The record gives the reactivity of an RNA of 177 nucleotides to DMS and 2A3. The reactions ran in a buffer of 150 mM KOAc, 10 mM MgCl2 and 150 mM bicine (pH 8.5), at 24 C. For 2A3 the reverse transcriptase was SuperScript II with manganese.

[RMDB]
RNA sequence: GGGAACGACUCGAGUAGAGUCGAAAAUGAAAAUCGCGCGAACUGGUGCCGCGCGCGCGCGAGGCGUCGGUGGUCGGCGAGCCCACGGACGCAAAAACUCGCGCGUAAAUAAAUAGGAUUAGAAAAAGCAUGUUAAUAACUUCGGUUAUUAACAUGCAAAAGAAACAACAACAACAAC
Reactivity to DMS in 0.01 (KOAc 150mM, MgCl2 10mM, bicine 150mM(pH8.5), 24C), signal-to-noise 2, nucleotides 027 to 126: u000g010a110a050a130a050u040c010g000c000g000c010g010a130a100c030u010g000g000u000g030c080c010g000c010g020c030g040c040g030c010g020c010g000a010g010g010c000g020u000c010g000g060u000g020g000u000c030g000g020c070g010a200g000c290c000c000a020c020g000g000a020c010g010c010a030a050a100a120a270c010u000c010g030c000g030c000g010u000a010a070a010u000a000a010a050u020a050g000g000a130u000u000a060g000a040a080a050a050a090
Reactivity to 2A3 in 0.01 (KOAc 150mM, MgCl2 10mM, bicine 150mM(pH8.5), 24C), signal-to-noise 1, nucleotides 027 to 126: u120g010a050a030a020a060u110c040g000c000g000c000g010a180a230c070u030g020g010u100g140c000c000g000c000g000c000g000c010g000c000g030c010g040a010g010g000c010g000u010c060g220g000u000g000g000u030c010g010g130c120g030a000g000c000c020c000a010c000g080g000a010c000g000c000a100a080a050a100a120c000u000c000g000c000g000c010g000u030a000a000a000u140a000a010a000u040a030g030g000a020u070u040a070g010a060a050a010a010a010
Values cover nucleotides 27 to 126. The DMS profile rests on 1,360 reads.